An RNA of 207 nucleotides, treated with 2A3 and read out base by base. The RNA was probed in 150 mM KOAc, 10 mM MgCl2 and 150 mM bicine (pH 8.5) at 24 C. Reactivities are given for positions 27 through 156. 2A3 adducts were read by reverse transcription with SuperScript II with manganese.
[RMDB]
RNA sequence: GGGAACGACUCGAGUAGAGUCGAAAACAAACCAGCUAAUUGGAGCUGUGUUGGUGACCAUAUUGGUAAUAAUGAUAAUUAUUCCUUUUUGAGCUCCUAAUUCGGUUCUGGCACAAUGCUGGGAACUGCAUUUACAUUAUCUUAAUCUUCACAUGACCCGUCUACUCACUUUCGAGUGAGUAGACGGAAAAGAAACAACAACAACAAC
Reactivity to 2A3 in 0.01 (KOAc 150mM, MgCl2 10mM, bicine 150mM(pH8.5), 24C), signal-to-noise 2, nucleotides 027 to 156: c010a000a070a010c000c020a000g000c010u030a060a010u190u080g060g000a010g000c000u030g010u000g000u130u020g030g010u050g040a040c010c020a020u030a100u150u170g060g080u060a040a030u030a020a030u110g100a080u110a230a020u300u040a020u020u030c050c000u170u050u030u000u100g080a060g000c050u000c000c000u020a030a050u030u030c020g040g000u000u000c000u030g020g000c080a090c110a180a280u180g000c000u070g050g020g080a030a000c040u040g110c020a050u070u090u110a120c090a110u050u190a070u190c050u150u210a240a160u030c040u220u060c080a110c110a300u190g020a040c080